Chemical mapping of a 207-nucleotide RNA with 2A3.
RNA sequence: GGGAACGACUCGAGUAGAGUCGAAAAGCCGAUCAGUUCCAACCUUGUUGAGGAUCACUCCCGCAAUACGAACAUGAGGAUCAGCAGUAGCAAAACCACGAACAACAGCUCCCACAGACUGGCUCAUACCGCGCACGUCGACCACAAGAACCACGGACGUGAUCACUAGUUUCGACUAGUGAUCACGAAAAGAAACAACAACAACAAC
Reactivity to 2A3 in 0.01 (KOAc 150mM, MgCl2 10mM, bicine 150mM(pH8.5), 24C), signal-to-noise 1, nucleotides 027 to 156: g050c020c010g000a100u020c030a030g030u050u020c050c010a050a020c010c000u040u080g030u100u170g120a160g100g000a060u110c020a080c040u040c010c020c030g020c060a050a050u120a140c040g110a110a000c000a070u140g030a030g050g040a060u080c020a010g020c000a010g020u040a000g000c040a000a060a020a000c010c010a040c110g040a070a020c060a030a010c020a040g000c010u040c000c020c010a060c000a020g020a030c030u050g000g000c010u000c060a000u010a090c010c030g050c000g000c040a030c030g000u030c000g020a040c010c020a030c030a040a010g070a070a000c000c140a040c100g000g060a010